[RMDB]
RNA sequence: GGGAACGACUCGAGUAGAGUCGAAAAAGCACGUUCGCGUGCUGGCUCACCUUUGUGCUACGGGAGUGUAGAACUACUCUUAAGCUAGCCCAUUGGGCUAGGUCACAGAGCUACACGAAGAACGUAGCACUCUGGUCUAUCGCAAGUUCGCUUGCAACGGAUAUCAUUGUUUCGACAAUGAUAUCCGAAAAGAAACAACAACAACAAC
Reactivity to 2A3 in 0.01 (KOAc 150mM, MgCl2 10mM, bicine 150mM(pH8.5), 24C), signal-to-noise 7, nucleotides 027 to 156: a000g010c010a010c020g040u090u160c290g020c000g110u010g000c010u010g030g030c000u010c020a020c000c000u000u030u000g000u000g010c000u000a000c010g020g000g000a040g000u000g000u010a000g010a100a040c060u140a070c000u220c000u010u050a050a020g070c000u000a000g000c010c020c050a300u220u300g010g000g000c000u010a020g060g110u120c070a060c030a050g000a000g000c000u000a000c000a000c000g040a090a010g010a020a000c000g000u010a000g000c000a000c000u000c000u000g000g000u000c050u110a300u200c140g000c000a000a000g010u090u130c210g060c110u020u020g000c020a040a040
Reactivity to DMS in 0.01 (KOAc 150mM, MgCl2 10mM, bicine 150mM(pH8.5), 24C), signal-to-noise 2, nucleotides 027 to 156: a020g060c000a000c000g030u000u010c290g100c000g050u000g000c000u010g020g000c070u000c020a090c000c020u010u010u000g050u010g010c000u010a060c010g010g000g000a160g020u000g020u000a040g000a040a110c030u010a240c030u000c010u000u000a090a050g010c010u000a020g010c000c000c000a300u000u000g030g150g010c010u000a000g000g000u000c010a060c190a020g020a030g010c000u000a000c000a020c010g010a150a180g040a110a150c040g000u000a040g010c000a010c000u000c010u010g000g020u020c060u010a070u010c060g010c010a040a110g020u000u010c160g020c010u000u010g000c010a150a120